[RMDB]
RNA sequence: GGGAACGACUCGAGUAGAGUCGAAAAGCACGGCAAGCAGCCGAAGCAACAUGAGCAGUACAAGCACAUGAAGCAGUACAAGCACUACAAGCAGUAGAAGCACAUGAAGCACAUGGAAAAAGAAAAAGGGAAAUCUUUACUUCGGUAAAGAUUUCCCAAAAGAAACAACAACAACAAC
Reactivity to 2A3 in 0.01 (KOAc 150mM, MgCl2 10mM, bicine 150mM(pH8.5), 24C), signal-to-noise 1, nucleotides 027 to 126: g040c040a000c000g070g020c000a000a210g120c010a010g060c050c000g000a000a000g110c070a050a020c000a080u070g040a020g000c040a000g030u260a130c230a240a000g000c000a000c000a060u160g170a070a020g000c000a000g000u050a000c040a000a060g040c060a000c050u050a010c000a170a050g060c040a040g040u010a000g010a240a000g050c040a110c000a060u000g060a000a000g000c000a000c000a050u040g000g040a070a150a000a000a000g060a000a180a000a000a000